[RMDB]
RNA sequence: GGGAACGACUCGAGUAGAGUCGAAAAACUUGGGCCCAUUCUUGCAAACGCACUGGCAAUCCUUGUUGCAGGCGCAGUUGUCCCCGCACUUUUGGGCCGAGCACUGGCAGUCUGUCGAGGAAUAAAAACGAUAUCGAGUAUUCGUACUCGAUAUCGUAAAAGAAACAACAACAACAAC
Reactivity to 2A3 in 0.01 (KOAc 150mM, MgCl2 10mM, bicine 150mM(pH8.5), 24C), signal-to-noise 5, nucleotides 027 to 126: a000c050u080u130g050g020g030c020c000c000a040u070u040c040u060u080g030c070a120a110a170c110g010c030a080c130u060g130g000c050a030a110u050c010c020u050u080g060u090u150g040c010a030g000g010c020g000c030a020g020u120u110g050u040c010c000c000c010g060c040a140c030u140u110u120u130g030g030g000c020c000g020a010g010c020a030c030u030g070g000c020a070g040u010c000u030g040u040c020g020a030g030g090a030a050u190a070a060a010a000
Reactivity to DMS in 0.01 (KOAc 150mM, MgCl2 10mM, bicine 150mM(pH8.5), 24C), signal-to-noise 2, nucleotides 027 to 126: a040c140u010u030g000g000g000c000c000c000a040u000u010c020u000u000g040c030a060a090a130c130g040c090a040c050u040g010g000c000a100a060u000c020c000u000u000g020u020u010g010c040a000g020g010c030g000c040a070g070u000u010g010u000c020c030c000c180g030c150a130c050u000u010u020u030g020g000g000c080c030g000a060g000c130a030c010u010g000g010c000a060g010u030c020u010g000u000c020g020a060g030g020a010a030u050a030a030a040a100

Chemical mapping of a 177-nucleotide RNA with 2A3 and DMS. DMS adducts were read by reverse transcription with MarathonRT. For 2A3, 3,704 sequencing reads were counted. Source: RMDB library OK1LIB, as collected in RNAgym. High 2A3 reactivity points to a flexible backbone, as in loops and unpaired stretches.